[RMDB]
Overview: An RNA of 207 nucleotides, treated with DMS and 2A3 and read out base by base. For DMS, 2,710 sequencing reads were counted. Source: RMDB library M2RFPK, as collected in RNAgym. The reactions ran in a buffer of 150 mM KOAc, 10 mM MgCl2 and 150 mM bicine (pH 8.5), at 24 C.

RNA sequence: GGGAACGACUCGAGUAGAGUCGAAAAACAGUCAGUACGCUGACUGAGGGAAACGGGAGCCGGGCUUGGGACAAGAGCCCUCCCAAGUCCAAGGCCAAGUAGGCUCUAGUGAUGGUACGCCAUCACAAAAACUGGUCUACCUUCGGGUAGACCAGAACAUAAAUAGGACCUUCGGGUCCUAUUUAUGAAAAGAAACAACAACAACAAC
Reactivity to DMS in 0.01 (KOAc 150mM, MgCl2 10mM, bicine 150mM(pH8.5), 24C), signal-to-noise 1, nucleotides 027 to 156: a160c010a000g030u000c000a030g010u000a100c280g030c000u000g030a020c020u020g000a100g010g030g000a030a090a140c100g000g040g000a190g000c090c060g030g040g010c000u030u000g020g020g020a040c000a040a080g010a050g020c000c000c070u000c000c000c010a040a020g020u000c020c040a130a130g020g000c000c060a070a140g010u000a090g010g010c020u020c000u000a200g030u010g000a020u000g000g050u000a080c300g080c000c010a020u010c000a000c020a000a050a010a110a100c000u000g010g030u040c010u000a020c000c010u000u010c300g040g010g000u010a000g000a000c020c000a000g020a050a100
Reactivity to 2A3 in 0.01 (KOAc 150mM, MgCl2 10mM, bicine 150mM(pH8.5), 24C), signal-to-noise 4, nucleotides 027 to 156: a000c000a000g000u000c000a000g010u040a040c200g030c120u000g010a000c000u020g020a090g020g030g010a060a230a150c160g060g020g040a060g040c050c050g010g010g000c000u000u010g000g000g000a010c010a070a020g020a000g030c000c000c000u000c000c000c000a000a000g000u000c000c020a120a060g030g000c030c030a070a040g080u140a190g050g010c000u000c020u030a040g010u000g010a010u000g010g010u030a030c270g040c030c000a000u010c000a000c010a010a070a000a000a000c010u010g000g000u000c000u000a000c000c010u020u100c240g090g000g000u000a000g000a000c000c000a000g000a000a000